[RMDB]
RNA sequence: GGGAACGACUCGAGUAGAGUCGAAAAUUUGUUGAGACGGGUCAAACAAUUUUAACAGAUGUAUUGGAUAAAGGACCUAAUCCAUUUAUCGCUAACAUGCAUUUGAAAAGAUCUGUAUUCUGUAGCGAACUACCUGAUUUUGCAUGUAGUGGGUCAAGACGAAUAACUAAUUCGUUAGUUAUUCGUCAAAAGAAACAACAACAACAAC
Reactivity to 2A3 in 0.01 (KOAc 150mM, MgCl2 10mM, bicine 150mM(pH8.5), 24C), signal-to-noise 5, nucleotides 027 to 156: u030u010u050g020u000u040g010a030g010a030c030g020g000g020u050c040a030a100a060c040a060a080u050u070u160u200a110a060c080a040g080a060u090g010u120a090u070u140g020g010a020u070a060a100a040g080g010a010c000c020u020a030a070u010c010c000a030u050u060u080a090u100c030g000c070u060a050a070c010a010u010g000c010a030u020u050u160g100a090a090a010a000g020a010u000c010u030g020u040a070u090u000c050u080g110u090a020g060c010g060a030a020c020u010a020c010c040u020g050a090u010u070u120u150g020c010a010u020g010u000a020g000u010g040g020g040u040c040a050a020
Reactivity to DMS in 0.01 (KOAc 150mM, MgCl2 10mM, bicine 150mM(pH8.5), 24C), signal-to-noise 3, nucleotides 027 to 156: u010u000u010g010u010u010g010a110g030a080c070g000g080g000u010c080a130a150a130c040a070a100u000u000u000u000a060a240c010a020g030a060u010g000u000a060u000u000g010g000a090u000a040a050a090g000g000a050c050c090u000a090a230u000c000c020a050u000u000u000a060u010c020g070c130u000a110a150c080a040u000g000c010a050u000u010u000g010a080a100a110a140g000a040u000c030u010g010u000a110u000u000c050u000g030u000a060g010c070g010a040a050c030u000a050c040c080u000g000a190u000u000u000u000g000c020a040u000g040u000a100g020u000g000g010g020u000c030a070a260
An RNA of 207 nucleotides, treated with 2A3 and DMS and read out base by base. For DMS, 6,490 sequencing reads were counted. Source: RMDB library OK3TST, as collected in RNAgym. The 2A3 profile rests on 3,520 reads. DMS adducts were read by reverse transcription with MarathonRT. High 2A3 reactivity points to a flexible backbone, as in loops and unpaired stretches.